An RNA of 177 nucleotides, treated with 2A3 and read out base by base. Source: RMDB library OK1LIB, as collected in RNAgym. For 2A3 the reverse transcriptase was SuperScript II with manganese. The 2A3 profile rests on 350 reads.
[RMDB]
RNA sequence: GGGAACGACUCGAGUAGAGUCGAAAAGGCGCCCAUCAUGCGGAUGUAGGCCCAGGUGAUGGGCAGGAUCGAGGCAGACCCGUAGGGCGCCGCCGACACCGGAUCCCCUUGGGGUAGUCCCGGCGCGUGGUACUGCCACCUUCGGGUGGCAGUACCAAAAAGAAACAACAACAACAAC
Reactivity to 2A3 in 0.01 (KOAc 150mM, MgCl2 10mM, bicine 150mM(pH8.5), 24C), signal-to-noise 1, nucleotides 027 to 126: g050g050c000g000c000c080c030a050u300c020a050u130g000c010g030g000a010u120g020u210a040g060g040c000c000c000a010g020g110u300g260a210u130g020g000g020c000a000g080g080a080u100c060g040a000g120g100c010a000g040a270c000c000c000g000u120a110g000g000g000c000g050c120c000g000c000c000g070a070c000a000c000c020g000g070a060u060c000c000c000c030u300u300g000g000g000g000u110a070g090u100c000c150c000g000g020c000g090c060g000